[RMDB]
RNA sequence: GGGAACGACUCGAGUAGAGUCGAAAACUUUGUUCGUCAACACAGUGCUGAAUGUCGUCAUAGCAAGCAGAGUACUAGAGCACCGUCUUACCGAUUCCGCGUGCGCUGCCUUCAUAGGCGACGACAACCGAACACGAAAGUUCGCUUUCGUGUUCGGAAAAGAAACAACAACAACAAC
Reactivity to 2A3 in 0.01 (KOAc 150mM, MgCl2 10mM, bicine 150mM(pH8.5), 24C), signal-to-noise 2, nucleotides 027 to 126: c040u110u050u140g030u060u050c090g050u050c000a000a030c030a030c080a090g080u050g020c040u080g070a190a110u130g010u000c020g010u020c000a050u060a040g000c050a020a000g000c000a000g020a010g010u020a050c020u060a030g030a020g130c020a060c130c020g070u050c030u070u130a100c020c040g080a050u040u060c080c010g000c030g010u000g010c010g000c020u020g000c000c040u110u050c070a040u100a200g050g000c030g010a000c020g010a000c000a030a070
Reactivity to DMS in 0.01 (KOAc 150mM, MgCl2 10mM, bicine 150mM(pH8.5), 24C), signal-to-noise 3, nucleotides 027 to 126: c070u000u000u010g010u000u000c060g020u010c100a080a140c110a100c070a030g060u000g010c040u000g010a130a110u000g000u000c020g000u010c070a140u010a150g000c060a060a060g020c040a050g000a100g010u000a030c110u000a160g000a070g010c020a120c120c090g000u010c070u000u020a090c220c180g000a140u000u000c030c040g000c090g030u000g000c010g010c090u020g000c020c010u000u000c250a070u000a060g010g000c020g000a010c000g020a020c060a020a160